An RNA of 207 nucleotides, treated with DMS and 2A3 and read out base by base. DMS adducts were read by reverse transcription with MarathonRT. The reactions ran in a buffer of 150 mM KOAc, 10 mM MgCl2 and 150 mM bicine (pH 8.5), at 24 C. High 2A3 reactivity points to a flexible backbone, as in loops and unpaired stretches.

RNA sequence: GGGAACGACUCGAGUAGAGUCGAAAAGACGUGGAGGUUACGCGCCCUCCUUUGCGCGUAAGUACGUCGAAAUUCGGUGCUUGGGAUCGCACCGUUCGAUCCAUUUGAUAUCCGCUUGGUGCCGCGGUUGGGCAUUUACACUUACCCGAAAGGGGAAAGCACUCGAUUAUUUCGAUAAUCGAGUGCUAAAAGAAACAACAACAACAAC
Reactivity to DMS in 0.01 (KOAc 150mM, MgCl2 10mM, bicine 150mM(pH8.5), 24C), signal-to-noise 1, nucleotides 027 to 156: g000a020c050g000u000g010g000a180g000g000u000u010a030c030g020c020g030c040c090c100u000c050c020u000u020u020g000c000g050c020g020u000a000a080g010u010a040c030g000u020c030g000a060a090a150u000u000c000g010g000u000g040c040u000u000g030g010g020a140u010c110g030c000a140c060c040g040u010u000c040g010a070u000c000c040a230u000u010u000g000a130u030a110u000c000c000g020c060u000u000g010g000u000g010c000c040g020c010g000g020u000u000g030g040g010c040a080u000u000u000a100c050a120c150u000u000a170c020c020c000g010a080a150a110g020g010g000g010a100a050
Reactivity to 2A3 in 0.01 (KOAc 150mM, MgCl2 10mM, bicine 150mM(pH8.5), 24C), signal-to-noise 2, nucleotides 027 to 156: g040a000c060g020u060g030g150a080g030g120u040u030a000c000g010c000g000c000c000c000u150c060c000u040u050u080g000c000g010c020g000u000a000a020g090u070a010c040g000u000c020g030a000a000a070u120u060c020g010g000u020g000c020u010u090g070g090g040a050u040c030g000c000a000c030c010g000u040u060c000g010a040u000c080c040a090u110u080u130g080a070u040a110u110c010c010g000c110u020u090g070g050u090g020c040c030g050c010g050g000u110u050g030g010g000c030a030u010u020u060a010c080a000c040u090u110a040c010c020c010g020a070a050a040g000g000g000g010a100a010